[RMDB]
Record summary:
This 177-nucleotide RNA was probed chemically with 2A3. 2A3 adducts were read by reverse transcription with SuperScript II with manganese.

RNA sequence: GGGAACGACUCGAGUAGAGUCGAAAACAGGAUCCUAAGUCACAAUAUUCAGGUGUUAUUUCAAAGAUGUUCGAUUCAUUUGAGCAUAACAAGCCAUUUACAUUUUUUGGUGACGGACUGCAAACUAGCCCUUCGGGAGUUUCGACUCCCGAAGGGCAAAAGAAACAACAACAACAAC
Reactivity to 2A3 in 0.01 (KOAc 150mM, MgCl2 10mM, bicine 150mM(pH8.5), 24C), signal-to-noise 1, nucleotides 027 to 126: c040a000g000g000a000u000c000c000u130a290a000g170u160c000a000c000a070a070u040a240u080u000c110a100g010g000u000g070u000u120a000u070u200u040c000a010a010a010g220a130u000g040u090u200c110g040a060u120u090c000a090u000u000u000g020a000g000c040a000u000a150a040c000a040a110g000c000c000a040u140u200u180a240c150a220u300u290u000u000u170u200g000g000u000g040a000c000g000g000a000c040u040g000c090a070a070a070c000u000a020
The RNA was probed in 150 mM KOAc, 10 mM MgCl2 and 150 mM bicine (pH 8.5) at 24 C. Reactivities are given for positions 27 through 126.